RNA sequence: GGGAACGACUCGAGUAGAGUCGAAAAAGGAGUAAGUCUGCUUAGAUGGCAUGUCGCUUUGGGCAAAGCGUAAAAAGCCCAAAUAAAAUUAAACGCAAACAACGUUAAAUUCGCUCCUGCUUACGCUAAAGCUGCGUAAGUUCAGUUGAGCCUGAAACCACUGUAGUAUCUUCGGAUACUACAGUGGAAAAGAAACAACAACAACAAC
Reactivity to DMS in 0.01 (KOAc 150mM, MgCl2 10mM, bicine 150mM(pH8.5), 24C), signal-to-noise 2, nucleotides 027 to 156: a030g020g010a130g040u010a040a090g000u000c040u000g040c050u010u010a110g000a170u020g070g020c030a150u000g050u010c040g070c040u010u000u010g020g020g020c010a110a020a110g010c050g020u030a030a060a140a160a120g000c010c030c030a040a020a080u000a020a040a040a110u000u010a080a080a040c000g010c000a060a150a110c080a070a030c040g000u000u000a070a060a120u000u030c060g000c010u010c010c000u000g020c010u010u010a010c000g000c010u000a060a090a140g020c280u010g080c000g030u010a010a030g000u010u010c030a010g010u000u010g000a040g000c040c060u020g000a080a080a170
Reactivity to 2A3 in 0.01 (KOAc 150mM, MgCl2 10mM, bicine 150mM(pH8.5), 24C), signal-to-noise 4, nucleotides 027 to 156: a000g060g000a030g030u080a100a030g020u050c010u030g010c010u050u080a060g040a180u160g030g000c030a030u100g060u150c020g000c010u010u030u030g000g010g000c130a260a260a010g010c010g080u140a030a040a000a000a000g000c000c020c010a000a010a000u010a000a000a010a010u030u120a040a040a010c050g010c090a160a060a050c040a060a040c060g020u060u140a100a100a170u160u130c080g010c000u010c000c000u000g000c000u010u000a000c000g000c010u060a130a030a270g090c140u050g000c050g000u000a010a000g000u060u080c010a020g010u050u120g030a010g000c000c020u070g040a070a050a010

Structure probing data (DMS and 2A3) for a 207-nucleotide construct. For 2A3, 3,400 sequencing reads were counted. The data come from the RNA Mapping Database (RMDB), library ARCHII. DMS adducts were read by reverse transcription with MarathonRT.